This 177-nucleotide RNA was probed chemically with DMS and 2A3. The DMS profile rests on 1,506 reads.
RNA sequence: GGGAACGACUCGAGUAGAGUCGAAAAGAAACGAAGGUUGGGUAAUCCUGGUCGGACAUCAGGAGGUUAGUGCAAUCGCAUAACCCAGCUUGACAACAAAAAGGAAAAAGAAAGAAGAAAAAGAAAACAUGAUGCCUCGAUUCGUCGAGGCAUCAUGAAAAGAAACAACAACAACAAC
Reactivity to DMS in 0.01 (KOAc 150mM, MgCl2 10mM, bicine 150mM(pH8.5), 24C), signal-to-noise 2, nucleotides 027 to 126: g000a170a080a000c090g010a120a160g070g030u000u000g000g000g000u000a090a150u010c000c000u010g020g000u000c170g040g000a300c110a020u020c000a000g000g020a050g000g000u020u000a110g010u020g000c070a080a080u100c080g000c020a060u010a130a030c040c000c000a060g000c000u000u000g000a080c170a050a090c040a030a050a020a070a050g000g010a070a090a050a120a000g000a080a020a050g010a140a070g010a000a000a000a110a110g000a090a020a060a130
Reactivity to 2A3 in 0.01 (KOAc 150mM, MgCl2 10mM, bicine 150mM(pH8.5), 24C), signal-to-noise 2, nucleotides 027 to 126: g010a020a000a000c020g020a020a000g000g010u000u000g090g020g000u140a020a040u000c020c000u000g000g000u000c160g040g140a080c020a020u000c000a000g000g000a000g000g100u130u120a060g080u010g000c000a140a280u160c220g010c000a030u010a030a010c000c000c000a040g030c020u000u010g000a020c130a100a000c010a010a130a160a010a030g150g040a070a080a000a010a010g120a120a170a000g080a020a010g010a040a120a000a000a040g090a030a030a000a030
The reactions ran in a buffer of 150 mM KOAc, 10 mM MgCl2 and 150 mM bicine (pH 8.5), at 24 C. Values cover nucleotides 27 to 126.